[RMDB]
RNA sequence: GGGAACGACUCGAGUAGAGUCGAAAAGCGUGACCCAUGGAAGUGUGUGGGGAGGAGAACUUAGGCGCCUUUUGCGCAGGAAUAUCCGUGUUGCUCUUAGGAAAUGCGUUUUCUACUGUCUCACGUGGGAUGAAGUCGAUAGAUCCUUGCGGCUCGCGAUCACAAUUGCCUUCGGGCAAUUGUGGUCAAAAGAAACAACAACAACAAC
Reactivity to DMS in 0.01 (KOAc 150mM, MgCl2 10mM, bicine 150mM(pH8.5), 24C), signal-to-noise 2, nucleotides 027 to 156: g020c050g040u000g000a300c020c030c020a140u010g010g010a060a050g030u000g040u010g000u000g000g000g000g000a070g020g000a090g010a090a050c040u000u010a100g020g000c010g000c030c140u000u000u000u000g020c060g000c020a070g010g010a110a150u000a160u000c030c000g010u000g010u000u000g020c000u000c100u000u000a090g010g030a060a030a050u000g010c090g030u000u010u010u000c030u010a070c060u010g010u010c010u010c030a040c060g010u010g000g010g000a090u000g000a080a100g020u000c040g000a160u000a120g000a120u000c030c020u000u010g000c020g010g000c000u000c010g000c300
Reactivity to 2A3 in 0.01 (KOAc 150mM, MgCl2 10mM, bicine 150mM(pH8.5), 24C), signal-to-noise 2, nucleotides 027 to 156: g020c020g010u040g030a070c000c000c000a030u070g040g030a080a060g040u090g000u030g000u040g070g000g000g000a020g020g010a000g000a020a010c030u050u050a070g090g000c010g010c020c000u030u090u110u160g000c010g000c020a010g010g060a070a050u060a040u120c020c050g050u040g030u110u070g040c040u020c020u090u090a020g010g060a010a070a030u090g020c010g020u010u010u010u000c020u020a050c010u030g020u040c020u030c010a040c040g010u060g000g020g000a020u030g060a050a010g020u020c020g000a010u030a040g050a010u000c000c000u000u100g000c010g010g010c020u020c050g030c080